[RMDB]
RNA sequence: GGGAACGACUCGAGUAGAGUCGAAAAGGUGAAAGCCGUCGGGUAUGGUAACACUUCCUCGGCUAGGGACUAUGGGCAGCCAAGCUCUAAAAGCCUCCUUGGCUCAAGAGUGCAGUUCACAGACUAAAUGGCAGUGGGUGUCCGCCUCCCCAGGCGGGGAGGAAAUAUCGUUCGCGAUAUUUCCUCCAAAAGAAACAACAACAACAAC
Reactivity to DMS in 0.01 (KOAc 150mM, MgCl2 10mM, bicine 150mM(pH8.5), 24C), signal-to-noise 2, nucleotides 027 to 156: g030g000u000g010a070a090a160g010c020c000g040u000c030g020g040g040u000a060u010g020g020u000a080a180c090a060c040u000u000c030c000u010c040g050g040c020u000a100g010g010g000a150c030u000a090u000g000g000g000c040a090g040c100c070a030a180g020c020u010c010u020a040a170a100a070g010c020c010u000c230c160u010u000g040g010c000u000c030a200a050g010a060g020u000g010c050a100g000u000u000c050a110c020a070g000a060c050u000a050a070a140u010g030g000c020a060g000u000g010g000g000u000g000u000c000c010g010c020c000u000c050c060c020c060a150g010g000c030g030g010
Reactivity to 2A3 in 0.01 (KOAc 150mM, MgCl2 10mM, bicine 150mM(pH8.5), 24C), signal-to-noise 2, nucleotides 027 to 156: g060g000u050g070a090a050a000g030c020c010g010u050c090g030g010g030u130a060u140g000g060u060a100a020c040a040c040u090u080c010c020u030c020g020g000c010u020a010g030g010g020a010c020u050a080u120g030g000g000c030a030g010c040c050a070a010g010c000u000c000u020a090a150a030a000g000c010c000u070c050c040u170u210g000g000c000u020c050a040a000g010a010g030u060g010c040a010g000u010u080c060a020c020a080g060a040c020u100a110a100a100u070g030g000c020a020g010u050g030g020g010u080g020u020c000c030g010c010c000u020c010c010c000c000a000g010g000c010g000g000